Chemical mapping of a 207-nucleotide RNA with DMS and 2A3.
Source: RMDB library M2RFPK, as collected in RNAgym.
[RMDB]
RNA sequence: GGGAACGACUCGAGUAGAGUCGAAAAAGACCACCUCUACGGAGGUGGUCAAGUCACGUAGCUAGUACCAGGUUGCAAUACUAGAGCGUUAGUCCUGGGGCGUACGGUGGCAGUACGCUCCCACCGAUAAAACUUGAAUACUUCGGUAUUCAAGUAACAUAUGCACAUUGUUCGCAAUGUGCAUAUGAAAAGAAACAACAACAACAAC
Reactivity to DMS in 0.01 (KOAc 150mM, MgCl2 10mM, bicine 150mM(pH8.5), 24C), signal-to-noise 3, nucleotides 027 to 156: a130g010a020c010c000a030c000c000u010c000u000a120c280g060g000a010g030g010u010g010g000u000c000a010a010g020u000c080a070c030g040u000a110g040c040u000a030g000u000a050c050c020a100g020g010u000u010g020c070a100a070u000a050c010u000a000g010a300g010c010g020u010u000a110g020u000c030c020u000g000g000g010g030c050g020u010a050c020g020g040u010g000g010c140a200g020u000a030c040g020c020u000c010c000c020a020c070c040g000a140u010a070a050a080a070c000u000u020g000a020a010u000a010c000u000u010c220g040g010u000a000u000u010c000a010a000g010u010a020a130
Reactivity to 2A3 in 0.01 (KOAc 150mM, MgCl2 10mM, bicine 150mM(pH8.5), 24C), signal-to-noise 5, nucleotides 027 to 156: a000g000a000c000c000a000c010c000u010c000u020a070c300g070g000a000g010g010u000g000g000u000c000a000a000g010u000c020a000c010g010u010a030g020c000u010a010g010u030a080c070c090a070g070g130u090u080g040c030a050a020u000a040c010u010a000g000a010g030c040g050u060u100a020g050u070c020c020u020g000g000g000g010c020g010u030a010c010g020g100u100g160g010c040a030g000u010a000c020g020c020u100c000c000c010a050c020c050g030a030u120a170a090a010a010c000u000u000g010a000a000u010a000c000u020u050c220g060g000u010a000u000u000c000a000a000g000u000a000a010